Record summary:
Conditions: 150 mM KOAc, 10 mM MgCl2 and 150 mM bicine (pH 8.5), 24 C. Structure probing data (DMS and 2A3) for a 177-nucleotide construct. Source: RMDB library TTRDES, as collected in RNAgym. For DMS, 2,331 sequencing reads were counted. Reactivities are rounded to 0.1 and cut off at 0 and 3. For 2A3, 3,820 sequencing reads were counted.

RNA sequence: GGGAACGACUCGAGUAGAGUCGAAAAGAUAUGGAUCCAGUAAGGGAGCGACCAUUCGGAAACGAAUGAUCGCGAGGAUCUUACGGAUCCUAAGUCAAAUCCGCAGGAGGUUCGCCUCCUGCGGAAACAUCUACGGUAUCUUCGGAUACCGUAGAUGAAAAGAAACAACAACAACAAC
Reactivity to DMS in 0.01 (KOAc 150mM, MgCl2 10mM, bicine 150mM(pH8.5), 24C), signal-to-noise 2, nucleotides 027 to 126: g000a030u010a100u010g000g000a010u010c000c010a240g040u000a010a020g010g040g000a100g010c010g010a010c010c000a010u000u000c010g020g010a030a020a060c000g030a030a010u010g000a010u000c000g010c000g000a100g000g010a140u000c000u000u010a010c010g010g000a030u010c000c000u010a000a050g000u010c020a120a150a140u000c020c000g060c000a030g010g000a040g020g000u010u000c300g010c020c000u000c000c000u000g030c000g000g010a010a010a130
Reactivity to 2A3 in 0.01 (KOAc 150mM, MgCl2 10mM, bicine 150mM(pH8.5), 24C), signal-to-noise 1, nucleotides 027 to 126: g010a000u030a010u100g010g010a010u020c030c070a080g030u010a000a000g060g160g040a260g000c000g020a000c000c000a000u000u010c000g010g000a050a010a030c000g000a010a030u020g020a040u020c010g010c010g010a040g090g020a190u000c000u010u000a000c000g020g010a010u000c000c000u000a000a010g010u000c010a030a070a200u020c010c000g010c010a020g010g000a000g000g090u100u250c300g140c040c010u020c020c000u010g000c000g000g000a000a000a000